[RMDB]
RNA sequence: GGGAACGACUCGAGUAGAGUCGAAAAAUGAGAUCCCAUCUUGCACACUGUGCUAAUUUGAGAUUCUCAUGCCUCCUACUUGGAGAGAUCUGGACUAGAAGUCAGGGCAUCUGACUCUGGCAGCCACAAAACGUACAAGGCUUCGGCCUUGUACGAACCCAAGAGUAUUCUUCGGAAUACUCUUGGGAAAAGAAACAACAACAACAAC
Reactivity to DMS in 0.01 (KOAc 150mM, MgCl2 10mM, bicine 150mM(pH8.5), 24C), signal-to-noise 1, nucleotides 027 to 156: a010u000g000a000g000a030u000c000c000c000a030u000c020u000u010g010c010a000c020a210c190u020g050u000g030c020u000a010a030u020u000u020g020a000g020a040u000u010c000u000c000a020u000g000c090c050u000c040c030u010a080c170u000u020g030g030a100g000a100g000a080u000c050u000g010g020a120c070u000a080g010a070a170g000u000c010a010g030g030g050c190a230u000c040u010g010a030c010u000c010u000g000g040c090a030g020c030c060a090c100a050a060a120a090c010g020u000a000c010a010a000g020g000c000u000u010c300g100g020c000c000u000u000g000u000a000c000g000a020a030
Reactivity to 2A3 in 0.01 (KOAc 150mM, MgCl2 10mM, bicine 150mM(pH8.5), 24C), signal-to-noise 4, nucleotides 027 to 156: a000u010g010a010g010a010u010c010c000c000a000u000c020u020u060g010c000a030c050a080c190u300g020u000g020c060u090a050a090u010u020u030g040a050g000a040u300u040c000u010c010a020u050g040c010c010u000c000c010u120a250c120u110u240g020g000a030g000a010g000a100u040c030u100g030g030a060c010u030a030g010a160a010g070u000c010a010g020g050g140c060a140u120c140u050g020a040c010u010c000u010g010g010c020a030g050c030c010a080c040a080a130a060a030c010g000u000a000c000a000a000g010g000c000u040u060c170g070g010c000c000u000u010g000u000a000c000g000a000a000

Description: The record gives the reactivity of an RNA of 207 nucleotides to DMS and 2A3. The RNA was probed in 150 mM KOAc, 10 mM MgCl2 and 150 mM bicine (pH 8.5) at 24 C. Source: RMDB library M2RFPK, as collected in RNAgym. Reactivities are given for positions 27 through 156.